[RMDB]
RNA sequence: GGGAACGACUCGAGUAGAGUCGAAAAAGGUGUGUCCGUGUGGCAUCGGAGAGUGAUGUCCCGUUAGUACAGCGUUAGCUUGAGGAUCGCCAGUGGUUCUGGACUCAAGUUCUGGCACUGACAUCAAUCAAGUCAAGGGGUUCGCUCCUUGGCUUGAAAAAGAAACAACAACAACAAC
Reactivity to 2A3 in 0.01 (KOAc 150mM, MgCl2 10mM, bicine 150mM(pH8.5), 24C), signal-to-noise 9, nucleotides 027 to 126: a000g120g020u080g000u020g020u020c020c030g050u060g050u100g060g000c010a020u010c040g050g060a140g010a020g120u140g040a030u020g030u020c010c010c000g030u040u100a050g010u040a070c020a020g010c060g080u090u120a010g010c010u000u000g010a010g040g070a150u170c100g060c060c000a020g010u120g150g140u220u140c000u010g010g010a010c000u000c010a010a000g010u080u040c020u030g010g000c030a010c030u030g010a010c000a030u090c040a030a130
Reactivity to DMS in 0.01 (KOAc 150mM, MgCl2 10mM, bicine 150mM(pH8.5), 24C), signal-to-noise 9, nucleotides 027 to 126: a070g000g010u010g010u010g010u010c020c030g020u010g010u030g010g010c030a050u010c030g000g010a130g010a120g020u010g010a060u010g000u000c010c030c040g010u020u010a060g010u020a100c040a030g010c300g010u010u010a030g010c010u000u000g000a030g000g010a110u040c240g010c010c010a020g010u020g010g020u040u030c010u000g000g000a150c010u010c020a020a020g000u010u020c030u000g000g000c030a030c010u000g000a040c040a110u020c120a090a180